[RMDB]
RNA sequence: GGGAACGACUCGAGUAGAGUCGAAAAAACAAUAGACUCGCUUAAAUGGGCUCAAAAGUACCGGCCCGACCUACCUAAACACAAUUUACAAUAUCUCCGUCAAGUGUACGGGUUUGCCGAAAACCAAACAUACUGUCCGAUUCGUCGGACAGUAUGUAAAAGAAACAACAACAACAAC
Reactivity to 2A3 in 0.01 (KOAc 150mM, MgCl2 10mM, bicine 150mM(pH8.5), 24C), signal-to-noise 1, nucleotides 027 to 126: a000a000c050a010a010u070a030g020a030c000u000c050g010c020u060u010a050a090a060u150g050g010g000c000u000c090a070a090a020a030g070u040a040c000c000g000g000c000c000c000g020a000c000c000u070a030c000c010u100a080a170a000c050a020c010a100a080u080u100u080a050c020a060a030u070a050u120c030u030c030c000g050u020c030a000a200g060u020g060u170a030c040g040g000g000u060u040u060g010c010c020g030a070a050a000a100c030c000a080a130
Reactivity to DMS in 0.01 (KOAc 150mM, MgCl2 10mM, bicine 150mM(pH8.5), 24C), signal-to-noise 2, nucleotides 027 to 126: a020a050c110a120a070u010a160g010a060c040u000c030g040c050u000u010a030a070a110u000g010g030g060c020u000c050a050a070a080a090g040u010a060c150c020g000g000c000c000c020g000a040c100c050u000a040c030c030u000a040a170a070c080a030c050a070a020u000u000u020a070c100a090a060u000a110u010c090u000c010c030g010u000c050a070a040g000u000g000u010a010c140g010g000g040u000u000u000g020c050c030g010a060a060a060a060c080c070a090a180
Structure probing data (2A3 and DMS) for a 177-nucleotide construct.
The reactions ran in a buffer of 150 mM KOAc, 10 mM MgCl2 and 150 mM bicine (pH 8.5), at 24 C.
Reactivities are given for positions 27 through 126.
It was measured as part of the RMDB library OK2TST.
For 2A3, 1,344 sequencing reads were counted.
The DMS profile rests on 1,026 reads.
DMS adducts were read by reverse transcription with MarathonRT.